[RMDB]
The record gives the reactivity of an RNA of 177 nucleotides to DMS. DMS (dimethyl sulfate) methylates the pairing face of unpaired adenines and cytosines. For DMS the reverse transcriptase was MarathonRT. Values cover nucleotides 27 to 126.

RNA sequence: GGGAACGACUCGAGUAGAGUCGAAAAGAUAUGGAUCCCUGUAAGAGGCUUCUUAUGGUCGGAAACGACCAUAACUAGCUACCCACCUUACUGGGAUCCUAAGUCAAAACUCACGUUCGCGUGAGAAGGUCAUAAAGUUGUUCGCAACUUUAUGACCAAAAGAAACAACAACAACAAC
Reactivity to DMS in 0.01 (KOAc 150mM, MgCl2 10mM, bicine 150mM(pH8.5), 24C), signal-to-noise 1, nucleotides 027 to 126: g010a050u020a300u000g020g000a000u000c000c000c020u000g000u010a000a000g020a070g000g010c010u000u000c110u020u000a020u000g000g000u000c000g020g030a060a040a180c000g000a020c000c000a000u000a010a010c090u000a020g020c020u000a070c040c040c060a300c140c000u000u000a000c010u000g000g060g010a010u000c000c000u000a000a200g020u010c070a120a030a120a040c000u010c000a020c000g000u000u020c250g030c010g060u000g000a000g000a060a040